[RMDB]
An RNA of 177 nucleotides, treated with DMS and read out base by base.
RNA sequence: GGGAACGACUCGAGUAGAGUCGAAAAGAUAUGGAGCCACGUCUAACAGCCAUAGGGACAUGAUCGGUGAUCGGAAACGAUCAUUGAUCAACAGCCCUCAUGGCUGUUAGACGUGGCUCCUAAGUCACCGGAUAAUAUUGUUCGCAAUAUUAUCCGGAAAAGAAACAACAACAACAAC
Reactivity to DMS in 0.01 (KOAc 150mM, MgCl2 10mM, bicine 150mM(pH8.5), 24C), signal-to-noise 2, nucleotides 027 to 126: g020a050u000a300u010g000g010a010g030c000c000a010c000g050u010c010u000a000a000c000a010g010c000c000a020u000a010g030g000g010a030c060a300u020g000a010u000c010g010g010u000g010a010u000c000g000g020a100a100a300c010g010a030u000c000a000u000u000g010a020u000c000a010a060c300a160g010c000c000c000u000c160a010u000g000g010c000u010g000u010u000a010g000a010c000g040u000g000g000c000u000c010c000u000a000a060g000u000c040a230
Source information
The reactions ran in a buffer of 150 mM KOAc, 10 mM MgCl2 and 150 mM bicine (pH 8.5), at 24 C. For DMS, 2,938 sequencing reads were counted.